[RMDB]
RNA sequence: GGGAACGACUCGAGUAGAGUCGAAAAUGUUACCAAAAGCUGGAGACUGAAGAUCGUGUUGCUUUCCUCGACUACGUGGCCCACUAUCUGAGGGAAAACAGUCCCAAUGGUGAUGUUACGCUGUUUACAUCACCACUCGAUUCGUCGAGUGGUGAUGAAAAGAAACAACAACAACAAC
Reactivity to DMS in 0.01 (KOAc 150mM, MgCl2 10mM, bicine 150mM(pH8.5), 24C), signal-to-noise 4, nucleotides 027 to 126: u000g010u000u010a100c040c040a030a080a160a150g010c060u000g010g000a140g010a200c060u000g000a170a070g000a060u010c080g010u000g010u000u000g010c120u000u000u010c040c030u000c100g000a120c090u010a090c120g020u000g000g000c080c200c010a070c070u000a030u000c060u000g010a300g010g010g000a060a050a070a130c120a070g010u000c020c010c010a090a140u000g010g010u010g010a050u000g000u000u000a080c150g010c070u000g000u000u000u000a160
Reactivity to 2A3 in 0.01 (KOAc 150mM, MgCl2 10mM, bicine 150mM(pH8.5), 24C), signal-to-noise 1, nucleotides 027 to 126: u030g000u020u070a000c030c000a000a160a050a000g050c050u050g000g050a080g020a090c020u070g040a100a040g040a080u040c010g010u040g010u170u110g050c010u080u090u070c000c010u080c040g080a100c080u150a030c070g080u050g000g000c010c050c000a020c040u010a040u000c030u060g030a070g040g000g010a030a110a010a040c000a000g110u050c030c020c000a010a060u050g030g000u030g030a000u030g040u010u000a020c050g000c080u070g010u170u110u030a030